Structure probing data (2A3 and DMS) for a 177-nucleotide construct.
The RNA was probed in 150 mM KOAc, 10 mM MgCl2 and 150 mM bicine (pH 8.5) at 24 C.
Reactivities are given for positions 27 through 126.
It was measured as part of the RMDB library OK1LIB.
For DMS, 1,540 sequencing reads were counted.
RNA sequence: GGGAACGACUCGAGUAGAGUCGAAAAAAAACCAUUGUCUCAUUGUACUCCAGUGAACUAGUAAAUGGUAAAGACAAUAACGUGGGGAAACCCGCCAGCAUUUCGGCACCGAGUUUAGCAUUAGGUAGGAUUUAUCGUAGUUCGCUACGAUAAAUCCAAAAGAAACAACAACAACAAC
Reactivity to 2A3 in 0.01 (KOAc 150mM, MgCl2 10mM, bicine 150mM(pH8.5), 24C), signal-to-noise 3, nucleotides 027 to 126: a000a010a000a000c030c020a020u030u040g010u000c030u000c020a020u000u030g140u070a040c020u060c100c010a030g080u000g140a130a040c020u030a110g120u140a060a080a000u040g010g020u080a080a100a000g040a010c010a040a040u080a120a020c060g060u110g000g000g000g020a030a040a030c030c000c000g000c040c030a050g020c020a040u040u030u160c030g020g020c030a010c000c050g040a000g030u010u010u080a050g050c090a120u010u130a070g080g060u050a090
Reactivity to DMS in 0.01 (KOAc 150mM, MgCl2 10mM, bicine 150mM(pH8.5), 24C), signal-to-noise 1, nucleotides 027 to 126: a180a000a050a090c000c040a090u000u030g000u010c080u000c010a000u010u000g000u000a020c040u000c160c010a090g030u000g000a090a040c020u000a010g030u040a070a010a000u000g000g030u080a030a210a000g020a040c020a010a000u000a060a070c190g000u000g000g010g000g000a120a060a190c000c040c020g030c060c060a100g000c250a110u000u000u030c120g010g040c010a050c030c000g010a050g000u040u000u030a040g000c090a090u040u090a050g020g050u010a090